[RMDB]
RNA sequence: GGGAACGACUCGAGUAGAGUCGAAAAAUGAACGUGGUGGGCGUAAGUUAGUAGAAGAUCUAAUGGUACGCGGUGGGUUUUCGACAGUACUCGAAACCACCACCACCACCAAGUCGUUCCCACCGAACUAUAGGAGAGCGUUCGCGCUCUCCUAUAGAAAAGAAACAACAACAACAAC
Reactivity to DMS in 0.01 (KOAc 150mM, MgCl2 10mM, bicine 150mM(pH8.5), 24C), signal-to-noise 1, nucleotides 027 to 126: a110u000g030a110a130c050g040u000g000g080u000g030g010g020c010g000u020a070a230g000u000u000a150g000u000a170g000a160a210g000a080u000c010u030a000a000u000g000g060u000a070c060g000c000g010g040u010g000g010g000u020u000u000u010c000g000a020c100a150g050u000a030c170u000c000g020a050a000a040c040c000a070c010c010a300c060c040a110c010c010a040c010c150a040a060g000u010c000g000u000u000c000c000c000a060c090c160g000a110a140
Reactivity to 2A3 in 0.01 (KOAc 150mM, MgCl2 10mM, bicine 150mM(pH8.5), 24C), signal-to-noise 1, nucleotides 027 to 126: a000u140g030a060a000c080g010u000g020g000u000g000g030g000c000g020u020a020a010g010u020u010a010g020u030a090g050a300a020g050a090u000c010u010a000a010u010g280g050u050a000c000g000c020g000g000u010g010g070g030u060u070u030u080c000g020a020c030a140g080u100a080c020u010c010g000a010a000a020c010c010a000c000c000a000c010c000a000c000c000a000c010c000a030a000g020u010c000g010u030u000c040c000c000a010c030c050g030a100a020